[RMDB]
RNA sequence: GGGAACGACUCGAGUAGAGUCGAAAAUGAAAUCACCAUGUGUCUCAAUAUAAUCAGACAGUAUGUUAAAAUCAUCAUCGUGUUUUGGGAAAGCAAGAUCGUCAAAUAUCUCUUCUGCUAGACGACCAACCAUAACGUGAUUCGUCACGUUAUGGUUAAAAGAAACAACAACAACAAC
Reactivity to 2A3 in 0.01 (KOAc 150mM, MgCl2 10mM, bicine 150mM(pH8.5), 24C), signal-to-noise 5, nucleotides 027 to 126: u090g040a040a050a050u110c050a020c090c010a020u070g040u040g030u040c010u000c040a160a060u210a090u090a270a140u110c010a010g030a050c020a000g110u160a030u080g060u070u140a050a080a060a050u050c020a000u010c000a020u040c050g050u020g070u100u050u110u040g120g020g010a100a040a000g050c050a060a010g020a090u030c010g030u030c070a030a110a070u110a110u040c070u020c000u160u000c010u010g040c020u010a030g010a050c020g000a010c020c020
Reactivity to DMS in 0.01 (KOAc 150mM, MgCl2 10mM, bicine 150mM(pH8.5), 24C), signal-to-noise 8, nucleotides 027 to 126: u000g020a050a060a110u000c080a120c190c030a050u000g010u000g000u000c010u000c060a060a080u010a110u010a070a100u010c100a030g010a030c030a040g010u010a020u010g010u000u000a060a080a090a080u000c040a020u000c060a070u000c080g010u010g010u000u000u000u000g010g010g010a060a060a070g010c100a060a070g010a040u000c040g020u000c080a050a080a110u000a080u000c040u000c050u000u000c070u000g010c050u000a090g010a050c050g010a050c070c050
The record gives the reactivity of an RNA of 177 nucleotides to 2A3 and DMS. The 2A3 profile rests on 5,868 reads. DMS adducts were read by reverse transcription with MarathonRT. The DMS profile rests on 10,644 reads.